[RMDB]
RNA sequence: GGGAACGACUCGAGUAGAGUCGAAAACAAGUAAUGGUCUGCUUGCAUCUGCACCACAUCUUGAACGGGUUACAGGAUUCAAUCAGAUAGAUUCUGACAAGGUUUAUGAUGAUGGAGCUCCACCGUGGGACGGAUAAAGGUUCGCCUUUAUCCGUCCAAAAGAAACAACAACAACAAC
Reactivity to DMS in 0.01 (KOAc 150mM, MgCl2 10mM, bicine 150mM(pH8.5), 24C), signal-to-noise 2, nucleotides 027 to 126: c020a070a070g010u010a060a090u000g000g010u000c040u000g000c050u010u000g040c060a090u010c090u000g030c050a120c020c020a040c040a040u000c020u020u000g000a040a050c000g000g030g030u000u000a090c060a040g000g010a010u000u010c070a080a120u020c170a130g020a170u000a100g020a040u000u000c010u020g010a080c090a040a090g010g000u000u000u010a020u010g010a070u000g010a110u000g000g020a050g030c050u010c070c030a090c090c090g050u000g000
Reactivity to 2A3 in 0.01 (KOAc 150mM, MgCl2 10mM, bicine 150mM(pH8.5), 24C), signal-to-noise 2, nucleotides 027 to 126: c040a050a000g080u130a070a250u120g080g040u010c020u030g010c020u020u020g010c020a080u070c030u100g010c010a020c000c030a020c000a000u020c010u020u070g010a020a000c040g070g000g090u170u140a030c020a040g010g020a020u080u080c040a010a130u060c040a030g020a080u080a080g060a010u110u040c010u040g020a030c020a040a070g070g000u050u020u020a040u060g020a050u010g060a080u010g010g040a000g020c000u000c020c020a070c040c030g030u100g110
Conditions: 150 mM KOAc, 10 mM MgCl2 and 150 mM bicine (pH 8.5), 24 C. An RNA of 177 nucleotides, treated with DMS and 2A3 and read out base by base. The DMS profile rests on 1,456 reads. DMS adducts were read by reverse transcription with MarathonRT. 2A3 is a SHAPE reagent: it acylates the 2'-hydroxyl of flexible nucleotides of all four kinds. Source: RMDB library OK2TRN, as collected in RNAgym.